Source information: Chemical mapping of a 177-nucleotide RNA with 2A3 and DMS. The reactions ran in a buffer of 150 mM KOAc, 10 mM MgCl2 and 150 mM bicine (pH 8.5), at 24 C. The DMS profile rests on 2,995 reads. The 2A3 profile rests on 1,341 reads. DMS (dimethyl sulfate) methylates the pairing face of unpaired adenines and cytosines.

[RMDB]
RNA sequence: GGGAACGACUCGAGUAGAGUCGAAAAGAAAAAGGAAAACCUGGAAAAGAAAAUCCAGGACCAAGGAACAAACCGUGAAAGACGCGAAGUACGCAAGAACGAGUCCACGGAACUUGCGUGGAGAAAAAUCAUAGCAGGGAUUCGUCCCUGCUAUGAUAAAAGAAACAACAACAACAAC
Reactivity to 2A3 in 0.01 (KOAc 150mM, MgCl2 10mM, bicine 150mM(pH8.5), 24C), signal-to-noise 2, nucleotides 027 to 126: g070a000a020a000a000a040g000g010a010a010a010a010c000c000u000g150g090a130a300a120a020g300a040a280a020a000u010c000c000a000g000g000a000c000c000a010a080g100g040a060a030c060a060a100a010c070c030g000u000g110a150a090a020g060a030c000g060c060g030a050a020g120u080a010c000g000c040a010a010g030a090a000c060g000a030g120u040c000c020a050c040g000g020a020a070c010u010u040g000c010g000u000g040g000a090g030a020a190a000a000
Reactivity to DMS in 0.01 (KOAc 150mM, MgCl2 10mM, bicine 150mM(pH8.5), 24C), signal-to-noise 3, nucleotides 027 to 126: g020a040a090a070a070a150g030g030a290a080a110a060c020c000u000g000g050a010a040a080a270g020a220a200a180a100u010c000c000a020g010g000a050c020c060a100a060g000g010a110a070c150a100a060a060c110c000g000u000g050a120a090a080g000a080c010g000c140g000a100a080g030u020a030c050g000c000a020a040g030a070a070c050g000a120g000u020c050c090a100c010g010g010a040a120c030u000u000g000c000g040u000g010g030a100g020a020a050a060a070